[RMDB]
RNA sequence: GGGAACGACUCGAGUAGAGUCGAAAAGAUAUGGAUUAUCUGUCUGUCCUUGGAUUUAGCGUCGGAAACGACGCUUGUCAGGACUGACAGAGUAAUCCUAAGUCAAACUACACCUUCGGGUGUAGAACAAUAGUACCUGGUUCGCCAGGUACUAUUGAAAAGAAACAACAACAACAAC
Reactivity to DMS in 0.01 (KOAc 150mM, MgCl2 10mM, bicine 150mM(pH8.5), 24C), signal-to-noise 9, nucleotides 027 to 126: g000a050u000a300u010g000g010a010u000u000a030u000c000u000g000u000c000u000g010u000c000c000u000u010g030g010a020u000u010u000a020g020c000g030u000c000g010g000a140a130a260c000g010a010c000g020c000u000u000g000u000c010a020g010g010a030c000u000g000a010c000a010g000a030g010u000a000a010u000c000c000u000a050a160g000u000c040a150a140a300c000u000a000c000a010c000c000u000u010c270g030g000g010u000g010u000a000g000a130a230
Reactivity to 2A3 in 0.01 (KOAc 150mM, MgCl2 10mM, bicine 150mM(pH8.5), 24C), signal-to-noise 6, nucleotides 027 to 126: g030a020u120a070u210g010g000a000u000u010a000u030c010u010g000u000c010u020g010u000c020c000u090u260g290g000a120u300u300u150a010g000c000g000u000c010g010g040a080a070a070c020g000a000c000g000c000u000u000g000u000c000a000g010g010a000c010u010g010a000c000a000g020a000g010u010a000a000u000c000c000u010a130a010g030u010c030a040a090a120c010u000a000c000a010c000c000u020u090c300g190g000g000u010g000u010a010g010a020a010